[RMDB]
RNA sequence: GGGAACGACUCGAGUAGAGUCGAAAAAGAAAGCAUGGCGAAGGGAAGCCACCACCGCGGGAGCUGUACGUUGUACGAGAGCUCAGCUUUUACCUUCCCAAACCGCGGAAAGGGAAAACCCAAAAAAGACGGUAAUAUACUUCGGUAUAUUACCGUCAAAAGAAACAACAACAACAAC
Reactivity to DMS in 0.01 (KOAc 150mM, MgCl2 10mM, bicine 150mM(pH8.5), 24C), signal-to-noise 1, nucleotides 027 to 126: a040g000a020a030a010g020c000a300u000g000g020c020g000a250a060g010g010g010a210a100g010c030c000a040c000c000a030c000c000g020c020g010g000g000a000g000c010u000g000u000a030c010g060u010u020g030u000a040c060g010a110g000a020g010c020u010c000a070g020c010u000u000u000u000a120c170c130u010u000c000c000c030a000a100a070c020c030g020c010g020g000a020a070a020g010g000g000a050a040a040a200c020c000c090a000a030a000a040a040a070
Reactivity to 2A3 in 0.01 (KOAc 150mM, MgCl2 10mM, bicine 150mM(pH8.5), 24C), signal-to-noise 1, nucleotides 027 to 126: a000g030a000a000a000g020c010a010u020g000g010c030g070a160a100g040g010g020a060a000g000c020c000a030c020c000a010c010c010g000c000g000g030g000a000g000c000u010g010u070a010c030g120u120u220g100u230a020c030g010a020g040a010g240c000u000c020a000g000c030u000u000u020u050a030c000c030u000u000c020c000c000a010a050a030c010c000g010c000g030g000a040a030a060g050g000g020a010a010a000a090c000c020c060a020a090a000a000a000a050
Chemical mapping of a 177-nucleotide RNA with DMS and 2A3. As a SHAPE reagent, 2A3 marks flexible, mostly unpaired nucleotides at the ribose 2'-OH. It was measured as part of the RMDB library M2PK90. The RNA was probed in 150 mM KOAc, 10 mM MgCl2 and 150 mM bicine (pH 8.5) at 24 C.